[RMDB]
RNA sequence: GGGAACGACUCGAGUAGAGUCGAAAACGGAUGACUUCUUCGGAAGUCAUCCGAAAAAAGAUAUGGAGUGUUCGGUAGGGAGCUGUGUCGGAAACGACACGCGAGGAUCUACCCACUCCUAAGUCAAAAAACUAAUACACCUUCGGGUGUAUUAGAAGCAGAGUAAUUGUUUCGACAAUUACUCUGCAAAAGAAACAACAACAACAAC
Reactivity to 2A3 in 0.01 (KOAc 150mM, MgCl2 10mM, bicine 150mM(pH8.5), 24C), signal-to-noise 2, nucleotides 027 to 156: c000g000g010a000u000g000a000c020u030u000c020u060u080c300g050g010a000a000g000u000c000a000u000c000c010g020a010a000a000a000a000a020g050a030u090a050u120g010g000a000g030u020g030u130u300c120g020g020u010a000g000g040g020a000g010c030u050g020u000g010u010c000g000g070a180a130a080c000g000a000c000a000c000g000c000g020a240g010g000a010u000c000u010a000c000c000c000a000c000u000c000c000u010a090a010g010u020c090a000a020a060a160a040a040c000u110a000a100u090a000c000a000c080c000u000u090c270g120g000g000u010g000u000a000u000u000a000g000a010a010